[RMDB]
RNA sequence: GGGAACGACUCGAGUAGAGUCGAAAAGACUGAGGCCCAGGGAGCGGCAGCAGCCCUCCUCUGCCCAGCAGAUGGCAGGCCCCAGUGGGCUCCAGCGGGCUGGUCCUGGGCCACGCUGGGGAGCAGGGCUGAUUCCUAUAUUCGUAUAGGAAUCAGCAAAAGAAACAACAACAACAAC
Reactivity to 2A3 in 0.01 (KOAc 150mM, MgCl2 10mM, bicine 150mM(pH8.5), 24C), signal-to-noise 3, nucleotides 027 to 126: g050a000c030u020g010a040g070g020c030c030c020a010g040g000g010a070g030c200g040g000c040a050g060c070a050g000c140c000c000u010c000c000u000c000u020g020c020c020c030a130g070c040a040g070a170u150g030g010c020a010g010g050c010c010c000c000a020g020u070g000g080g030c040u040c030c000a020g020c060g010g110g050c070u100g020g060u100c000c030u050g010g010g000c000c000a030c010g000c000u010g000g010g000g000a020g060c040a060g000g120
Reactivity to DMS in 0.01 (KOAc 150mM, MgCl2 10mM, bicine 150mM(pH8.5), 24C), signal-to-noise 6, nucleotides 027 to 126: g000a110c030u000g010a100g010g020c030c080c130a140g000g000g010a040g020c160g040g010c030a140g020c200a120g010c000c000c000u000c010c020u000c030u000g000c030c010c070a150g020c150a110g010a120u000g010g000c020a040g000g000c010c000c010c030a060g020u000g010g010g000c010u000c020c010a030g010c050g010g000g010c030u010g010g010u000c050c000u000g000g000g000c010c000a020c020g000c010u000g000g000g000g000a090g010c110a110g010g010